[RMDB]
RNA sequence: GGGAACGACUCGAGUAGAGUCGAAAAGAUAUGGAGUGAGCGAAGAACUAUCGUAACAUCUUUCGGAAACGAAAGUGGAUAGGGAGCUCCUCCUAAGUCAAAACCGAUGACCUUCGGGUCAUCGGAAGUGUAUGGUAAGCUUCGGCUUACCAUACACAAAAGAAACAACAACAACAAC
Reactivity to 2A3 in 0.01 (KOAc 150mM, MgCl2 10mM, bicine 150mM(pH8.5), 24C), signal-to-noise 2, nucleotides 027 to 126: g030a010u100a050u160g000g010a010g020u300g030a000g020c010g180a300a050g050a090a080c010u000a000u040c030g070u100a050a050c040a230u210c020u000u000u010c000g030g000a070a080a040c010g000a000a010a010g000u010g000g010a000u000a030g000g050g030a010g000c000u000c020c000u000c000c000u000a100a020g050u040c020a030a030a090a120c020c000g000a010u000g010a000c000c010u040u100c300g170g000g000u000c000a010u000c000g000g000a020a040
Reactivity to DMS in 0.01 (KOAc 150mM, MgCl2 10mM, bicine 150mM(pH8.5), 24C), signal-to-noise 2, nucleotides 027 to 126: g000a020u000a300u010g040g000a040g020u010g010a000g030c000g020a090a160g000a110a180c000u000a010u000c010g010u000a020a120c120a030u000c000u000u000u000c000g000g010a120a110a160c000g000a000a000a000g010u000g010g000a000u000a030g000g000g000a130g020c000u000c000c010u000c000c000u000a010a060g020u000c050a070a030a160a150c000c000g020a010u000g010a040c000c010u000u000c240g030g020g000u000c000a000u000c000g000g000a000a000